Background: This 177-nucleotide RNA was probed chemically with DMS and 2A3. The 2A3 profile rests on 2,636 reads.
RNA sequence: GGGAACGACUCGAGUAGAGUCGAAAAGGGAGCGAGUUCGCUCGCUCCCAAACCCGAUGAAGCCGCACUUACGGAGCUUCAUACAUCUAAGAAGUGCAAUAAAAAGCGGUAGCUUCGGCUACCGCAAGUUUACUCAUUUCUUCGGAAAUGAGUAAACAAAAGAAACAACAACAACAAC
Reactivity to DMS in 0.01 (KOAc 150mM, MgCl2 10mM, bicine 150mM(pH8.5), 24C), signal-to-noise 2, nucleotides 027 to 126: g000g000g010a030g010c010g020a010g000u020u010c200g020c010u000c020g000c010u000c000c010c000a010a030a040c010c000c010g000a040u000g000a010a000g000c000c200g050c020a040c050u020u010a300c150g000g000a190g000c010u000u020c000a040u020a140c140a070u010c150u010a090a060g000a060a060g020u000g030c040a190a070u020a060a090a090a080a120g010c000g000g010u000a000g010c010u000u030c250g040g020c000u000a000c000c010g010c000a000a020
Reactivity to 2A3 in 0.01 (KOAc 150mM, MgCl2 10mM, bicine 150mM(pH8.5), 24C), signal-to-noise 2, nucleotides 027 to 126: g000g010g010a010g000c000g000a010g010u030u070c110g030c080u010c000g020c000u000c000c000c000a010a000a000c000c000c000g000a050u040g010a000a010g050c020c020g030c060a020c020u040u100a050c140g100g030a030g000c020u020u000c000a000u040a020c060a050u080c090u190a100a010g030a080a000g080u020g030c000a030a040u160a200a150a030a060a020g010c010g010g020u000a010g000c000u010u050c270g050g000c000u010a000c010c010g000c000a000a000